[RMDB]
RNA sequence: GGGAACGACUCGAGUAGAGUCGAAAAGAUAUGGAUUACUGGAGGAACUACAACUGGUGGUCGGAAACGACCAAGAGGUUGCCGUUGAAAGUAAUCCUAAGUCAAAACUGUGUGUUCGCACACAGAAGAUCACAUGUACCUUCGGGUACAUGUGAUCAAAAGAAACAACAACAACAAC
Reactivity to 2A3 in 0.01 (KOAc 150mM, MgCl2 10mM, bicine 150mM(pH8.5), 24C), signal-to-noise 1, nucleotides 027 to 126: g000a000u070a040u210g000g000a000u030u000a000c010u020g050g030a020g070g080a110a050c070u170a070c210a050a020c000u080g070g000u040g000g020u240c000g000g050a040a060a020c000g000a000c000c000a000a040g190a030g080g000u030u030g000c040c030g100u090u030g030a020a040a010g000u000a000a000u000c000c000u010a090a010g030u030c040a030a020a100a140c010u000g000u000g010u010g030u080u090c300g020c130a020c000a000c000a000g010a040a010
Reactivity to DMS in 0.01 (KOAc 150mM, MgCl2 10mM, bicine 150mM(pH8.5), 24C), signal-to-noise 1, nucleotides 027 to 126: g030a010u020a300u010g000g000a010u000u000a000c010u000g000g020a190g010g020a100a020c030u010a140c000a030a010c000u000g000g030u000g000g030u000c000g030g000a090a080a170c000g000a020c000c000a060a060g040a220g030g030u000u010g000c020c060g000u000u000g030a300a110a000g030u000a000a010u020c000c010u000a030a060g020u000c050a060a120a100a140c020u000g000u000g000u000g030u000u000c190g050c000a000c000a010c000a000g000a130a060
Structure probing data (2A3 and DMS) for a 177-nucleotide construct. High DMS reactivity at an A or C suggests that its Watson-Crick edge is free. DMS adducts were read by reverse transcription with MarathonRT. For 2A3, 1,716 sequencing reads were counted. For 2A3 the reverse transcriptase was SuperScript II with manganese. It was measured as part of the RMDB library TTRDEL. For DMS, 769 sequencing reads were counted.